[RMDB]
Structure probing data (2A3 and DMS) for a 177-nucleotide construct.
The RNA was probed in 150 mM KOAc, 10 mM MgCl2 and 150 mM bicine (pH 8.5) at 24 C.
The DMS profile rests on 1,617 reads.
DMS adducts were read by reverse transcription with MarathonRT.
For 2A3 the reverse transcriptase was SuperScript II with manganese.
For 2A3, 1,568 sequencing reads were counted.
RNA sequence: GGGAACGACUCGAGUAGAGUCGAAAACCUAAAAAAAAAUGCUUUGAAGGGUUUUCCAAGCUGACUUUUAAUCAUGGGAAAGAAAUUACCCACAUGGAGUCAGCAGAAAAUGAAAAAGUGGGCCUCGGAAGUGAUAACUAUUCGUAGUUAUCACUUCAAAAGAAACAACAACAACAAC
Reactivity to 2A3 in 0.01 (KOAc 150mM, MgCl2 10mM, bicine 150mM(pH8.5), 24C), signal-to-noise 3, nucleotides 027 to 126: c010c000u140a120a010a000a000a000a000a020a050a100u120g000c020u080u070u050g120a090a060g080g080g070u040u030u030u000c010c010a050a030g020c020u000g000a000c010u030u070u040u260a090a070u130c070a030u040g000g000g050a050a070a100g070a020a170a080u140u090a160c000c000c000a020c040a050u120g010g000a010g010u010c000a000g000c000a000g000a000a030a010a040u120g020a080a060a030a010a000g020u030g010g030g060c000c060u040c010g060
Reactivity to DMS in 0.01 (KOAc 150mM, MgCl2 10mM, bicine 150mM(pH8.5), 24C), signal-to-noise 2, nucleotides 027 to 126: c000c000u070a000a000a020a000a020a140a130a210a100u030g010c050u010u000u000g030a160a220g030g000g040u000u000u000u000c030c100a080a110g050c000u000g020a000c000u020u010u000u000a100a130u010c250a120u030g000g000g000a120a020a100g000a050a090a090u000u000a170c010c010c000a010c300a080u030g000g020a030g020u000c000a010g000c000a090g020a020a030a010a050u000g000a080a090a040a050a050g000u010g000g000g000c050c040u000c090g050